[RMDB]
RNA sequence: GGGAACGACUCGAGUAGAGUCGAAAAUGUGACAUGUUCGCAUGUCACAAGCCAGGUAGUUCCUAUCUCAAUUAGCUGUACAGGCCAUGGUCUGGAUAGGAAAGCUCUACCUAUUCGUAGGUAGAAAAACCCAAUACUGAUUCGUCAGUAUUGGGUUAAAAGAAACAACAACAACAAC
Reactivity to 2A3 in 0.01 (KOAc 150mM, MgCl2 10mM, bicine 150mM(pH8.5), 24C), signal-to-noise 5, nucleotides 027 to 126: u050g010u000g000a000c000a000u010g010u020u100c250g010c110a000u000g000u000c000a000c000a010a000g050c000c020a070g100g110u130a060g080u030u040c010c000u010a020u010c060u010c030a090a300u140u120a070g020c040u070g060u210a090c070a140g010g000c030c020a070u120g040g040u080c110u070g010g020a000u010a010g000g000a030a030a010g010c010u000c000u010a000c000c000u000a010u010u030c160g040u020a010g000g010u000a010g080a070a050a010
Reactivity to DMS in 0.01 (KOAc 150mM, MgCl2 10mM, bicine 150mM(pH8.5), 24C), signal-to-noise 7, nucleotides 027 to 126: u000g020u010g010a000c000a000u000g010u000u010c240g030c000a010u000g000u000c000a000c000a030a080g000c030c020a110g020g020u010a080g010u000u000c010c000u000a020u000c010u000c100a070a070u000u000a050g010c020u000g000u020a140c270a150g000g000c010c060a040u010g020g010u010c120u010g010g000a010u000a000g000g000a030a050a110g010c140u000c000u000a000c000c000u000a020u000u010c150g010u010a000g010g000u000a010g010a020a060a060